[RMDB]
RNA sequence: GGGAACGACUCGAGUAGAGUCGAAAAUAUGUCUUGACCUGAGAAACACUGCGGUGCUUCACUUCAUAGCUCAAUCAAACUUCCUCCGUAAUCUCGUAGACCGUUGUACGUUUUCGUCCGAACAUGACAAAUAGCAGUCCUUCGGGACUGCUAUUUGAAAAGAAACAACAACAACAAC
Reactivity to DMS in 0.01 (KOAc 150mM, MgCl2 10mM, bicine 150mM(pH8.5), 24C), signal-to-noise 1, nucleotides 027 to 126: u000a140u000g030u000c060u000u000g010a100c060c010u010g010a180g010a160a050a100c080a090c030u000g020c090g020g000u000g060c020u000u010c060a120c040u010u010c070a060u000a060g010c060u030c050a060a090u010c110a100a030a170c090u000u000c040c000u000c020c020g000u000a080a060u000c060u010c020g000u010a070g030a050c170c030g000u000u000g030u020a040c100g020u030u000u000u000c050g000u000c020c020g000a110a030c120a120u000g000a240